The record gives the reactivity of an RNA of 170 nucleotides to DMS and 2A3. The reactions ran in a buffer of 150 mM KOAc, 10 mM MgCl2 and 150 mM bicine (pH 8.5), at 24 C. For DMS the reverse transcriptase was MarathonRT. The data come from the RNA Mapping Database (RMDB), library 15KLIB. For 2A3, 40,355 sequencing reads were counted.
[RMDB]
RNA sequence: GGGAACGACUCGAGUAGAGUCGAAAACAACUGUUAUCUUGCCACUGCAUUGUUAACACUCCAACAAAUACAGUUGAAGUUUAAUCCACCUGCUCUACAAAGGGCUGGUGAAGCUGCUAACUUUUGUACGGCUAUCACUUCGGUGAUAGCAAAAGAAACAACAACAACAAC
Reactivity to DMS in 0.01 (KOAc 150mM, MgCl2 10mM, bicine 150mM(pH8.5), 24C), signal-to-noise 5, nucleotides 027 to 129: c010a090a090c040u010g010u060u000a070u050c060u010u000g000c030c070a000c140u000g030c060a040u090u040g000u000u000a010a010c090a100c070u000c020c030a020a070c050a030a100a060u100a100c170a040g000u000u010g030a000a000g030u050u040u100a110a060u050c100c010a040c050c010u030g050c010u040c010u030a140c300a050a090a070g000g000g000c030u010g000g000u020g030a020a070g040c080u070g000c080u040a040a040c040u020u020u010u000g020u000a080c180g030
Reactivity to 2A3 in 0.01 (KOAc 150mM, MgCl2 10mM, bicine 150mM(pH8.5), 24C), signal-to-noise 9, nucleotides 027 to 129: c010a010a010c030u030g020u090u040a130u120c050u050u160g050c020c040a110c080u070g000c020a040u050u080g040u050u060a070a030c050a030c070u000c020c010a010a010c010a020a170a050u280a080c040a020g000u010u010g050a030a000g010u030u060u190a050a040u080c010c000a000c000c000u010g000c000u000c000u040a170c100a100a210a090g000g010g000c000u010g000g000u000g010a010a010g010c030u050g000c010u020a040a030c000u050u040u030u040g060u060a050c070g070